Description
The record gives the reactivity of an RNA of 177 nucleotides to 2A3 and DMS.
RNA sequence: GGGAACGACUCGAGUAGAGUCGAAAAUACGACAUCGACGUGGCCGAGCAGGCGGAAAGCCUCGUCCGCGAGGUGAGUGACCUCUUCUCGAUGCCGGACGUCGCACAUCACGCUGUGCACAUCGAACGGCCCGUAUGUAGUUCGCUACAUACGGGCCAAAAGAAACAACAACAACAAC
Reactivity to 2A3 in 0.01 (KOAc 150mM, MgCl2 10mM, bicine 150mM(pH8.5), 24C), signal-to-noise 1, nucleotides 027 to 126: u200a000c010g040a010c040a100u070c010g020a010c000g030u060g030g000c040c000g000a020g000c030a030g000g140c020g030g020a050a000a000g000c000c000u000c020g040u000c000c030g000c010g010a000g030g020u040g020a030g050u090g190a110c010c010u060c020u070u060c000u000c010g060a050u110g090c020c000g000g000a040c030g020u010c040g030c000a020c000a030u120c060a000c100g030c040u060g040u060g170c030a030c010a090u140c040g020a050a020c070
Reactivity to DMS in 0.01 (KOAc 150mM, MgCl2 10mM, bicine 150mM(pH8.5), 24C), signal-to-noise 1, nucleotides 027 to 126: u000a110c010g000a070c190a110u000c000g010a030c020g060u000g000g010c000c010g020a100g040c240a200g010g020c040g000g000a110a290a210g000c000c000u000c000g020u000c110c110g020c000g000a020g050g000u000g000a100g020u000g000a180c220c020u000c020u000u000c010u000c000g000a110u000g000c140c070g000g000a020c020g020u000c040g000c020a030c070a070u000c100a140c070g020c200u000g010u010g020c110a000c090a010u000c050g070a070a190c080

2A3 adducts were read by reverse transcription with SuperScript II with manganese.
Conditions: 150 mM KOAc, 10 mM MgCl2 and 150 mM bicine (pH 8.5), 24 C.
It was measured as part of the RMDB library OK2TST.
For 2A3, 1,241 sequencing reads were counted.